[RMDB]
RNA sequence: GGGAACGACUCGAGUAGAGUCGAAAAUUGGGGACGCAGAUGUUUGGGACGUCACCUUGCAGUGUUAACUUGGCUCUCAUGAACCUCUUUGAUCUUCCACAAGGGGUAGGCUACGGGUGAAACCUCUUUCAACACUGUGAUUCGUCACAGUGUUGAAAAAAGAAACAACAACAACAAC
Reactivity to 2A3 in 0.01 (KOAc 150mM, MgCl2 10mM, bicine 150mM(pH8.5), 24C), signal-to-noise 5, nucleotides 027 to 126: u080u070g030g000g000g000a020c030g020c030a020g080a160u100g110u070u120u100g090g010g040a020c030g010u010c020a080c020c000u000u080g020c040a050g020u030g040u160u090a080a050c040u050u090g040g030c000u010c010u000c050a080u100g070a060a070c000c000u030c000u060u050u060g070a110u050c050u160u030c070c020a060c050a050a000g040g020g000g000u020a050g060g000c020u030a040c060g050g000g000u040g030a050a010a020c000c000u000c000u030
Reactivity to DMS in 0.01 (KOAc 150mM, MgCl2 10mM, bicine 150mM(pH8.5), 24C), signal-to-noise 2, nucleotides 027 to 126: u000u030g000g010g000g000a040c050g000c070a080g010a130u010g000u000u020u020g000g000g000a090c100g010u000c060a030c070c040u030u000g050c050a070g000u010g000u050u020a070a100c050u000u010g000g000c020u010c010u030c050a040u000g000a080a060c060c010u000c010u000u010u000g010a080u010c100u000u010c020c080a030c120a020a040g000g000g030g000u010a050g020g000c010u000a060c050g000g000g000u000g000a030a090a110c040c020u000c070u000